[RMDB]
RNA sequence: GGGAACGACUCGAGUAGAGUCGAAAAAUGGUGACGCCGUCCGGACCUAUCCAGGCAGGGCUGUCCUGAGCUUCGACGGGAGAAUUGACAGCAGCCCUCCAGCAGCUCAUUCGCCGUUUGACGCCGGUCUACCGAGGGCGUUCGCGCCCUUGGUAGGAAAAGAAACAACAACAACAAC
Reactivity to DMS in 0.01 (KOAc 150mM, MgCl2 10mM, bicine 150mM(pH8.5), 24C), signal-to-noise 8, nucleotides 027 to 126: a040u020g010g000u010g000a090c090g020c030c020g000u010c020c030g010g010a090c060c030u010a090u020c050c050a080g010g030c090a050g010g000g010c020u010g000u010c050c030u000g000a180g000c030u000u000c040g010a120c200g000g000g010a090g000a080a090u030u020g010a120c120a070g000c020a060g000c020c010c010u000c050c040a110g010c080a070g010c040u000c040a070u020u000c050g010c010c010g000u010u000u010g000a080c070g010c010c000g000g000
Reactivity to 2A3 in 0.01 (KOAc 150mM, MgCl2 10mM, bicine 150mM(pH8.5), 24C), signal-to-noise 7, nucleotides 027 to 126: a000u130g040g010u050g030a030c050g010c030c010g030u030c010c010g030g040a060c000c020u040a060u050c020c010a010g040g000c040a000g010g010g000c010u010g010u040c000c020u030g020a020g030c010u030u030c020g100a090c040g060g040g010a060g030a040a090u090u090g060a020c010a020g010c010a020g000c020c000c000u030c000c010a020g020c010a000g000c010u020c020a070u130u050c030g010c010c000g000u010u020u080g010a010c020g010c010c000g010g020

Overview
This 177-nucleotide RNA was probed chemically with DMS and 2A3. Conditions: 150 mM KOAc, 10 mM MgCl2 and 150 mM bicine (pH 8.5), 24 C. The data come from the RNA Mapping Database (RMDB), library OK1LIB. For DMS the reverse transcriptase was MarathonRT.